[RMDB]
RNA sequence: GGGAACGACUCGAGUAGAGUCGAAAACAUAAAGACUGGGACGAUGUCAUCAUCUUACAGAAUUUCCAGAUUCCUCAGAGUAUCAAUCUUGCUACCAUGAUAAAGGACAAGGCAAUAUCCCAAACAAGCCUCUGCCAAUCUUCGGAUUGGCAGAGGCAAAAGAAACAACAACAACAAC
Reactivity to 2A3 in 0.01 (KOAc 150mM, MgCl2 10mM, bicine 150mM(pH8.5), 24C), signal-to-noise 1, nucleotides 027 to 126: c020a000u270a070a080a000g020a070c000u000g030g090g000a100c160g050a030u000g100u020c000a100u070c000a030u000c140u060u230a000c000a000g180a000a070u090u050u000c000c000a000g060a070u080u150c000c020u080c130a050g000a000g130u170a000u180c030a160a050u000c100u030u030g000c000u030a030c000c050a000u000g010a200u300a200a220a110g000g160a170c000a020a080g050g000c020a000a000u000a050u050c000c000c000a000a070a000c000a030a030

Conditions: 150 mM KOAc, 10 mM MgCl2 and 150 mM bicine (pH 8.5), 24 C. An RNA of 177 nucleotides, treated with 2A3 and read out base by base. It was measured as part of the RMDB library OK1LIB. Values cover nucleotides 27 to 126.